Conditions: 150 mM KOAc, 10 mM MgCl2 and 150 mM bicine (pH 8.5), 24 C. Structure probing data (2A3 and DMS) for a 177-nucleotide construct. DMS adducts were read by reverse transcription with MarathonRT. The DMS profile rests on 1,133 reads. Reactivities are given for positions 27 through 126. It was measured as part of the RMDB library OK1LIB.
RNA sequence: GGGAACGACUCGAGUAGAGUCGAAAAAUGAGUCGACAGACGAGGCGAAUGGGCAUAUCGCUGGAUGCCUCCAAUGUGUACGAAAUGGACCCAUGGAAAGACGACCGGUGCAGAGACUUCAUUGCACAUGCGUGACCACUUUCGAGUGGUCACGCAUAAAAGAAACAACAACAACAAC
Reactivity to 2A3 in 0.01 (KOAc 150mM, MgCl2 10mM, bicine 150mM(pH8.5), 24C), signal-to-noise 1, nucleotides 027 to 126: a000u070g000a000g090u000c000g030a000c000a040g020a030c030g000a050g000g080c000g000a160a240u260g050g000g000c100a110u100a130u270c130g030c000u050g000g050a040u140g000c000c000u020c000c000a020a070u060g110u000g040u120a010c020g050a110a040a000u080g000g000a000c000c000c000a010u040g070g000a000a150a000g040a000c010g000a000c050c000g040g000u150g030c060a000g090a040g160a260c020u000u030c070a130u000u130g000c000a000c000
Reactivity to DMS in 0.01 (KOAc 150mM, MgCl2 10mM, bicine 150mM(pH8.5), 24C), signal-to-noise 1, nucleotides 027 to 126: a100u030g010a300g000u000c000g000a110c020a010g000a300c300g000a040g000g040c040g000a100a020u030g080g020g050c040a190u010a060u000c260g000c000u000g000g020a170u070g000c000c010u000c000c040a030a140u040g000u040g000u060a100c060g000a000a090a030u000g020g000a100c000c020c000a070u020g000g000a020a020a060g000a110c080g000a100c130c110g090g010u030g000c000a100g000a000g000a200c120u000u100c070a020u000u000g070c040a040c030